[RMDB]
RNA sequence: GGGAACGACUCGAGUAGAGUCGAAAAAUAAGGCUGCUAUGAACAUAGUGGAGCAUGUGUUCUUAUUACCAGUUGGAACAACUUCUGUGUAUAUGCCCAGGAGAGGUAUUGCUGCAUUCUAAAGGUACUCCUUAAGAGAGUUCGCUCUCUUAAGGAGAAAAGAAACAACAACAACAAC
Reactivity to 2A3 in 0.01 (KOAc 150mM, MgCl2 10mM, bicine 150mM(pH8.5), 24C), signal-to-noise 4, nucleotides 027 to 126: a000u100a020a030g050g000c010u020g030c030u080a030u170g050a120a020c050a050u070a050g070u050g090g020a030g030c030a070u050g040u020g010u090u050c020u050u080a130u040u090a040c040c000a040g040u040u070g050g040a080a020c020a020a040c040u040u010c010u020g070u010g050u030a030u050a020u300g010c000c000c010a010g000g030a040g020a020g020g060u120a090u090u080g020c030u030g000c010a030u110u030c020u170a080a040a000g020g000u090a070
Reactivity to DMS in 0.01 (KOAc 150mM, MgCl2 10mM, bicine 150mM(pH8.5), 24C), signal-to-noise 6, nucleotides 027 to 126: a070u000a070a090g000g010c040u000g000c060u000a050u010g010a090a080c090a060u000a050g010u000g000g010a060g030c070a070u000g020u000g010u000u000c010u010u000a070u000u010a140c100c030a090g010u000u000g010g010a070a050c080a090a120c030u000u000c020u000g000u010g010u000a100u010a090u010g000c020c030c010a060g000g010a060g000a070g000g010u000a060u000u010g010c020u000g000c040a080u000u000c070u010a030a080a100g000g010u000a140